[RMDB]
RNA sequence: GGGAACGACUCGAGUAGAGUCGAAAAGAUAAGCUAGCAGCAAAAAGGAACCGAUUCCCACCAAGUUCGGAAAGAGAUACCGGGCGAGGCGCAGAAGAAAGAAUCUCGCUUCAGACACCCCAAGGACAUGACCUUAAAAUGUUCGCAUUUUAAGGAAGCCUAUACCUUAGUUCGCUAAGGUAUAGGCAAAAGAAACAACAACAACAAC
Reactivity to 2A3 in 0.01 (KOAc 150mM, MgCl2 10mM, bicine 150mM(pH8.5), 24C), signal-to-noise 1, nucleotides 027 to 156: g030a120u150a070a000g000c010u020a000g030c050a020g000c000a010a000a000a000a150g050g000a040a020c020c000g070a090u030u000c000c040c000a030c010c000a100a010g040u050u000c000g040g050a060a040a020g140a000g050a030u070a100c030c000g000g010g000c010g020a000g010g000c030g020c090a000g060a080a000g030a070a220a010g030a060a100u000c050u060c090g060c000u000u020c030a070g040a130c050a120c050c060c010c010a010a070g040g020a000c030a060u090g080a050c000c000u000u000a000a000a010a000u010g010u000u000c040g010c140a000u000u020u000u020a000a000g000g000a000a010

Structure probing data (2A3) for a 207-nucleotide construct. 2A3 adducts were read by reverse transcription with SuperScript II with manganese. For 2A3, 818 sequencing reads were counted. Reactivities are given for positions 27 through 156.